Record summary:
Source: RMDB library OK3TST, as collected in RNAgym. Chemical mapping of a 207-nucleotide RNA with DMS and 2A3. Values are in units of 0.01, from 0 to 300, in steps of 10.

RNA sequence: GGGAACGACUCGAGUAGAGUCGAAAAAAUGGAUAGGCAAUGAUUUAGGAAACUGUAAGACCUUCAAGUCAGAUAGUAAAGGAUGGCCCUGUUAUCAAAGGAGAUGCUUAGAAAGGUGUGUGUAGAGGUUAGCACUGCAAACUCCAAGGUGCUGCUCGUAUGUGUACCCUUUCGAGGGUACACAUACAAAAGAAACAACAACAACAAC
Reactivity to DMS in 0.01 (KOAc 150mM, MgCl2 10mM, bicine 150mM(pH8.5), 24C), signal-to-noise 2, nucleotides 027 to 156: a090a040u020g020g030a090u010a120g020g040c030a090a060u000g000a120u000u000u000a070g010g010a080a060a030c030u000g030u000a120a080g000a070c010c010u000u010c080a070a090g030u000c040a040g000a110u000a110g010u000a040a070a090g010g000a110u000g010g000c020c030c000u000g020u000u020a080u000c060a050a050a120g020g000a090g030a090u010g000c050u000u010a060g000a050a080a070g020g020u000g010u010g050u010g020u000a040g020a050g020g010u000u000a050g020c020a090c020u000g010c070a060a020a090c060u000c030c030a110a300g000g010u000g010c000u010g010c040u020c060
Reactivity to 2A3 in 0.01 (KOAc 150mM, MgCl2 10mM, bicine 150mM(pH8.5), 24C), signal-to-noise 4, nucleotides 027 to 156: a000a010u140g030g010a060u060a060g030g010c040a060a070u100g040a040u100u060u110a060g030g030a100a070a090c030u040g030u110a080a010g040a050c030c020u090u080c150a090a020g030u040c020a000g030a130u070a020g070u100a060a080a080g080g050a050u030g040g010c000c000c000u040g040u140u070a080u110c090a110a030a050g020g000a060g010a010u060g050c050u070u100a020g050a050a080a010g010g000u020g000u010g010u020g040u050a040g000a020g100g020u080u120a010g000c000a010c040u050g010c050a070a080a100c040u010c040c020a040a030g020g010u020g010c020u010g010c020u050c120